[RMDB]
RNA sequence: GGGAACGACUCGAGUAGAGUCGAAAAGAUAUGGAUGGUUUGGAGAACCUGGCCUUUCGGAAACGAAAGGAACUACCAAGGGUUCUAUGAAGAACCAUCCUAAGUCAAAUCAGGCUUCGGCCUGAAACAAUACUGGGACGUUCGCGUCCCAGUAUUGAAAAGAAACAACAACAACAAC
Reactivity to DMS in 0.01 (KOAc 150mM, MgCl2 10mM, bicine 150mM(pH8.5), 24C), signal-to-noise 2, nucleotides 027 to 126: g010a040u000a300u000g000g000a010u000g000g030u000u000u000g000g000a000g000a010a020c000c000u000g030g000c000c000u000u000u000c000g000g030a150a070a230c000g010a000a020a000g030g010a040a000c190u040a250c150c130a050a140g020g020g000u000u000c000u010a210u000g000a120a140g000a010a020c010c000a000u000c000c010u000a000a050g010u000c030a070a130a150u000c030a030g000g000c010u000u020c200g050g010c000c020u010g010a040a100a150
Reactivity to 2A3 in 0.01 (KOAc 150mM, MgCl2 10mM, bicine 150mM(pH8.5), 24C), signal-to-noise 1, nucleotides 027 to 126: g020a020u070a060u150g000g010a000u010g000g000u010u040u050g020g050a020g020a040a010c000c090u040g040g000c000c000u020u040u020c000g030g000a110a090a100c020g020a030a000a020g050g010a010a030c060u220a080c030c080a120a150g140g020g010u040u000c040u130a300u040g030a010a030g040a020a010c020c010a000u000c000c000u000a050a000g020u020c010a050a020a240u020c010a020g000g000c000u060u180c260g180g000c000c020u010g040a010a000a000